[RMDB]
RNA sequence: GGGAACGACUCGAGUAGAGUCGAAAAGAUAUGGAACUCUUCACACGCUUCUAUAAUCUCAACUCACAAAGUAUCGGAAACGAUACUUUGUGAGUUGAGGUAGAAGGUGUGAGAGAGUUCCUAAGUCGUUCCUAGGUAAGUUCGCUUACCUAGGAACAAAAGAAACAACAACAACAAC
Reactivity to DMS in 0.01 (KOAc 150mM, MgCl2 10mM, bicine 150mM(pH8.5), 24C), signal-to-noise 1, nucleotides 027 to 126: g020a110u000a300u010g000g020a010a000c000u010c000u010u000c000a020c000a010c010g010c000u000u000c000u010a100u020a300a130u020c000u000c000a000a000c000u000c000a030c000a030a020a010g030u000a000u000c000g010g020a130a040a140c010g020a000u000a010c000u000u000u000g000u000g000a000g000u000u000g000a000g010g030u000a010g000a000a010g040g030u000g010u000g000a020g020a020g010a010g010u000u010c000c000u010a010a110g000u000c070
Reactivity to 2A3 in 0.01 (KOAc 150mM, MgCl2 10mM, bicine 150mM(pH8.5), 24C), signal-to-noise 2, nucleotides 027 to 126: g050a070u140a120u260g000g000a010a000c010u020c000u060u060c030a050c030a040c130g300c120u000u030c080u010a220u070a300a300u150c000u030c000a020a000c010u000c000a000c000a010a000a010g000u000a000u000c070g080g030a150a080a050c010g000a000u010a000c000u000u010u000g010u000g020a010g020u000u010g010a010g000g000u000a010g000a020a000g020g000u010g000u000g030a010g010a000g000a000g000u000u050c010c000u000a020a000g070u010c060
Notes: Structure probing data (DMS and 2A3) for a 177-nucleotide construct. Conditions: 150 mM KOAc, 10 mM MgCl2 and 150 mM bicine (pH 8.5), 24 C. For 2A3 the reverse transcriptase was SuperScript II with manganese. The 2A3 profile rests on 3,199 reads.